[RMDB]
RNA sequence: GGGAACGACUCGAGUAGAGUCGAAAAAAGGACUGGUUCGCCAGUCCUUAUUCAUUCGUACGCUACGAAGCGUAAGUCAUUACGCAAAUGACUAAAAGCGUAUACGAAAGGACUUCGGUCCUUUCAACACAUUACGGGGGUUCGCCCCCGUAAUGUGAAAAGAAACAACAACAACAAC
Reactivity to 2A3 in 0.01 (KOAc 150mM, MgCl2 10mM, bicine 150mM(pH8.5), 24C), signal-to-noise 2, nucleotides 027 to 126: a000a010g020g010a010c010u010g000g020u030u060c080g050c040c000a010g000u020c000c000u000u000a000u020u060c000a000u010u010c020g070u000a020c000g030c010u000a050c080g180a140a050g000c020g050u010a000a000g100u090c070a220u030u050a020c040g000c050a000a000a270u170g110a060c050u080a000a000a110a110g020c010g010u030a040u030a060c050g000a030a000a000g020g000a010c000u020u070c240g080g000u030c000c030u020u010u000c010a010a000
Reactivity to DMS in 0.01 (KOAc 150mM, MgCl2 10mM, bicine 150mM(pH8.5), 24C), signal-to-noise 2, nucleotides 027 to 126: a030a000g000g000a000c000u010g020g000u010u000c230g030c020c010a010g040u010c010c000u000u010a050u000u000c050a120u000u020c120g000u000a010c010g000c000u000a070c100g010a110a180g020c030g000u010a030a020g000u020c210a070u000u000a040c090g030c080a040a070a170u000g000a040c150u000a070a060a060a060g000c030g000u010a020u000a110c210g010a010a020a000g000g000a000c000u010u000c150g030g000u000c010c000u000u000u000c000a120a210
The record gives the reactivity of an RNA of 177 nucleotides to 2A3 and DMS. Reactivities are given for positions 27 through 126. The DMS profile rests on 1,460 reads. DMS adducts were read by reverse transcription with MarathonRT.